[RMDB]
RNA sequence: GGGAACGACUCGAGUAGAGUCGAAAAUCAAUGGGGAAGCGUUAUUACUCAAGGAACGAUAAGUGAGGGUAGUACUGCUAACACCAUUUGUGAUUUAUCACACUCCGCACCGCUGCUUCCUUGUGGAAUUGAUGACGGUAUUCGUACCGUCAUCAAUAAAAGAAACAACAACAACAAC
Reactivity to 2A3 in 0.01 (KOAc 150mM, MgCl2 10mM, bicine 150mM(pH8.5), 24C), signal-to-noise 9, nucleotides 027 to 126: u050c010a000a020u020g000g000g010g030a040a000g000c020g020u020u020a020u020u020a010c010u020c030a060a090g210g020a190a070c070g090a180u130a300a050g030u050g100a080g000g020g000u010a010g000u000a020c040u050g000c000u020a070a020c090a080c040c010a000u020u050u100g050u010g020a050u040u060u140a150u110c020a010c010a010c060u000c010c000g000c010a020c030c020g030c050u070g000c000u050u020c010c000u030u050g040u070g070g040a080
Reactivity to DMS in 0.01 (KOAc 150mM, MgCl2 10mM, bicine 150mM(pH8.5), 24C), signal-to-noise 8, nucleotides 027 to 126: u010c070a040a010u010g000g000g000g010a190a030g000c020g010u000u000a020u010u010a020c010u000c000a090a190g020g030a110a040c040g000a140u040a090a160g010u000g000a170g000g000g000u000a010g010u010a010c030u010g010c010u010a030a200c080a080c020c010a000u000u010u010g020u010g000a040u000u010u000a070u020c080a090c050a070c090u010c020c010g010c050a040c040c040g010c060u000g010c090u010u000c010c010u010u000g010u010g000g010a100